Source: RMDB library OK1LIB, as collected in RNAgym.
An RNA of 177 nucleotides, treated with DMS and 2A3 and read out base by base.
RNA sequence: GGGAACGACUCGAGUAGAGUCGAAAAACGACCGAGAAGGCGCCGACGAGGACGCCGGGCUGGGCAAGUCAGAAUCGCCACCGCAGGCUCCGACGACCGUGACGCUGCCCAACGGUGAGACGGUGACUGUUGCUGUAACGUUCGCGUUACAGCAACAAAAAGAAACAACAACAACAAC
Reactivity to DMS in 0.01 (KOAc 150mM, MgCl2 10mM, bicine 150mM(pH8.5), 24C), signal-to-noise 2, nucleotides 027 to 126: a100c120g000a050c000c040g000a150g000a170a110g000g010c000g030c000c030g000a080c070g010a120g000g000a120c040g040c050c020g030g020g000c100u040g000g030g040c100a080a100g000u020c120a050g010a180a130u000c060g020c010c000a030c060c080g000c120a060g000g000c040u060c040c000g020a120c070g020a060c040c060g000u010g010a090c050g000c070u010g030c060c000c050a050a100c010g000g020u030g020a150g000a150c090g000g000u030g000a150c060
Reactivity to 2A3 in 0.01 (KOAc 150mM, MgCl2 10mM, bicine 150mM(pH8.5), 24C), signal-to-noise 3, nucleotides 027 to 126: a010c080g040a020c040c000g010a030g030a040a090g040g050c020g000c000c000g050a080c090g020a050g030g070a040c020g040c000c020g010g030g010c030u070g030g000g000c010a090a000g010u060c040a040g110a040a060u070c050g000c010c020a040c000c020g100c080a070g020g020c020u000c050c060g070a160c050g020a070c030c020g050u040g020a020c080g010c160u040g040c010c000c010a030a060c010g050g000u000g010a060g040a000c010g050g000u040g020a060c050

About this RNA:
The 2A3 profile rests on 1,568 reads. DMS adducts were read by reverse transcription with MarathonRT. The DMS profile rests on 2,255 reads. 2A3 is a SHAPE reagent: it acylates the 2'-hydroxyl of flexible nucleotides of all four kinds.